Structure probing data (2A3 and DMS) for a 207-nucleotide construct. 2A3 adducts were read by reverse transcription with SuperScript II with manganese.

[RMDB]
RNA sequence: GGGAACGACUCGAGUAGAGUCGAAAAGGGGUCGAUGUCCGUUCCGGACCCAGCUUGGAUUUAUACACUGAAGCCUCCACGGUGUAUUGUCAGCUGCUAACGGAACGAACAUCGACGGAGGCACCCAAAUCAGCAAGCGGUUCGCCGCUUGCUGAAAGAUAUACGAGUUCUUCGGAACUCGUAUAUCAAAAGAAACAACAACAACAAC
Reactivity to 2A3 in 0.01 (KOAc 150mM, MgCl2 10mM, bicine 150mM(pH8.5), 24C), signal-to-noise 2, nucleotides 027 to 156: g060g010g020g010u000c000g000a000u000g000u000c000c000g000u000u000c000c000g040g000a020c000c010c000a010g000c030u070u170g190g010a090u230u300u170a010u070a000c000a000c000u030g080a210a060g030c030c060u050c050c020a050c030g020g000u000g000u000a010u000u030g010u000c010a010g000c000u000g000c000u020a080a030c000g000g000a000a000c000g010a000a000c000a000u000c000g000a000c000g000g000a010g020g030c040a080c000c010c020a040a080a060u030c010a000g000c000a010a000g000c010g030g060u070u130c260g050c090c000g020c000u000u010g000c000u000g000a000a000a000
Reactivity to DMS in 0.01 (KOAc 150mM, MgCl2 10mM, bicine 150mM(pH8.5), 24C), signal-to-noise 1, nucleotides 027 to 156: g030g040g000g060u010c000g000a000u000g050u000c010c010g060u000u000c000c040g000g010a300c300c230c010a040g040c020u000u000g070g000a050u000u080u010a060u000a020c000a010c000u010g000a080a140g000c080c040u000c020c040a300c000g000g060u000g000u000a010u000u000g040u000c060a050g010c000u000g000c010u010a060a300c000g030g000a040a040c010g010a050a010c010a000u000c000g000a010c010g010g000a060g010g080c080a130c000c000c020a080a060a210u010c020a010g000c010a010a020g040c050g000g010u000u000c300g040c060c020g010c010u000u000g010c010u030g000a000a050a040
DMS adducts were read by reverse transcription with MarathonRT.